[RMDB]
RNA sequence: GGGAACGACUCGAGUAGAGUCGAAAAUUGGCAUCUUCUGUAAUCACGCUUCUGUGAGGUCUGAUUGUGGGAUGGCCUGAGGCUGGGGAUCACUGUGUAGUGGACCAGCCAUGUUGACGGAACGUCCGCACUAAGCUUGCCAUCAAUAUGGGUGCCGCACAAUGUACACCUUCGGGUGUACAUUGUGAAAAGAAACAACAACAACAAC
Reactivity to DMS in 0.01 (KOAc 150mM, MgCl2 10mM, bicine 150mM(pH8.5), 24C), signal-to-noise 2, nucleotides 027 to 156: u000u010g010g020c010a020u000c010u000u000c030u040g010u000a020a050u000c020a040c100g000c020u000u010c050u000g000u020g010a050g020g030u000c130u000g020a040u000u000g010u000g010g050g020a070u000g010g000c010c090u010g010a150g020g010c010u010g000g010g010g000a110u000c000a020c020u000g020u010g030u010a030g050u000g000g020a190c030c000a030g000c000c000a020u000g020u000u000g020a070c020g010g010a150a150c090g010u000c010c040g010c060a110c100u010a090a120g010c010u010u000g010c030c020a010u010c020a030a110u000a060u000g030g010g000u000g030c020c020g000
Reactivity to 2A3 in 0.01 (KOAc 150mM, MgCl2 10mM, bicine 150mM(pH8.5), 24C), signal-to-noise 3, nucleotides 027 to 156: u080u030g000g010c000a000u000c000u100u000c010u070g020u060a010a000u020c000a010c030g040c050u040u050c040u240g300u260g130a020g000g030u010c030u030g000a030u030u000g010u040g010g040g000a000u000g000g020c000c020u020g070a100g010g000c000u000g000g010g040g130a080u080c000a010c010u060g040u050g090u300a030g000u010g010g020a050c000c000a020g000c000c000a000u030g010u000u030g030a030c010g000g110a230a130c080g010u000c000c000g010c010a010c080u150a060a060g080c010u070u060g000c020c010a010u020c040a030a070u120a100u260g010g020g000u020g000c000c000g000